Chemical mapping of a 177-nucleotide RNA with 2A3 and DMS. The RNA was probed in 150 mM KOAc, 10 mM MgCl2 and 150 mM bicine (pH 8.5) at 24 C.
RNA sequence: GGGAACGACUCGAGUAGAGUCGAAAAGAUAUGGACCUUUGGGCAGCCUAAGACAGCUCUUCGGAAACGAAGAGUCGAGGAACUACUGCAGAAGGUCCUAAGUCAAAGUACGAGUUCGCUCGUACAACGAUGAGAAAAAGUUCGCUUUUUCUCAUCGAAAAGAAACAACAACAACAAC
Reactivity to 2A3 in 0.01 (KOAc 150mM, MgCl2 10mM, bicine 150mM(pH8.5), 24C), signal-to-noise 5, nucleotides 027 to 126: g020a020u050a030u060g000g000a000c000c000u020u020u020g230g300g020c020a040g040c020c060u140a130a030g060a030c020a020g000c000u000c000u020u000c010g010g010a050a030a030c000g000a010a010g020a010g000u040c010g030a050g020g000a090a070c130u300a020c000u270g000c010a020g020a020a000g020g000u000c000c000u000a030a010g000u000c030a100a090a010g000u000a000c010g000a000g000u030u120c220g070c130u000c010g000u000a010c000a000a010
Reactivity to DMS in 0.01 (KOAc 150mM, MgCl2 10mM, bicine 150mM(pH8.5), 24C), signal-to-noise 8, nucleotides 027 to 126: g000a030u000a280u010g000g010a010c000c000u000u000u000g010g020g010c000a010g000c050c040u000a150a110g030a120c300a150g000c010u000c010u000u000c000g010g010a070a070a100c010g000a020a010g000a020g020u000c020g000a070g010g010a070a050c090u010a190c010u000g010c000a300g000a020a010g010g000u000c000c000u000a000a070g000u000c020a120a060a120g010u000a010c000g000a010g010u000u010c250g010c010u000c000g000u000a000c010a090a150
2A3 adducts were read by reverse transcription with SuperScript II with manganese. For 2A3, 21,055 sequencing reads were counted. For DMS, 11,174 sequencing reads were counted. For DMS the reverse transcriptase was MarathonRT. High 2A3 reactivity points to a flexible backbone, as in loops and unpaired stretches.